[RMDB]
RNA sequence: GGGAACGACUCGAGUAGAGUCGAAAAGAUAUGGACGUCCAGUUCGCGAGGAUCUUAAUCGGAAACGAUUAAGGGAGCGACUGGAACGUCCUAAGUCAAAAUGGUGUCAGUGUUCGCACUGACACCAGCUUUGUUGAAAGUUCGCUUUCAACAAAGCAAAAGAAACAACAACAACAAC
Reactivity to DMS in 0.01 (KOAc 150mM, MgCl2 10mM, bicine 150mM(pH8.5), 24C), signal-to-noise 3, nucleotides 027 to 126: g000a030u010a300u020g000g000a020c000g020u000c000c000a010g000u010u020c020g030c010g000a090g030g000a020u010c000u000u000a000a000u000c000g010g000a090a060a100c010g010a010u000u010a010a000g000g010g010a010g010c000g030a030c010u000g000g000a020a010c030g030u000c000c000u000a000a070g010u010c020a090a080a100a250u000g010g010u000g010u000c000a010g020u000g010u010u020c300g030c010a000c000u000g000a010c000a000c000c000a000
Reactivity to 2A3 in 0.01 (KOAc 150mM, MgCl2 10mM, bicine 150mM(pH8.5), 24C), signal-to-noise 4, nucleotides 027 to 126: g010a000u030a020u060g000g000a000c000g000u000c010c010a010g010u230u300c020g000c000g040a300g040g000a000u000c000u000u010a000a000u000c000g010g000a000a000a020c000g000a000u010u000a000a000g000g000g000a020g010c010g000a000c000u000g000g020a030a010c000g000u000c000c000u000a000a000g010u000c020a010a030a030a300u170g000g000u000g000u000c010a010g000u010g070u110u250c300g080c150a000c000u000g000a010c000a000c000c000a000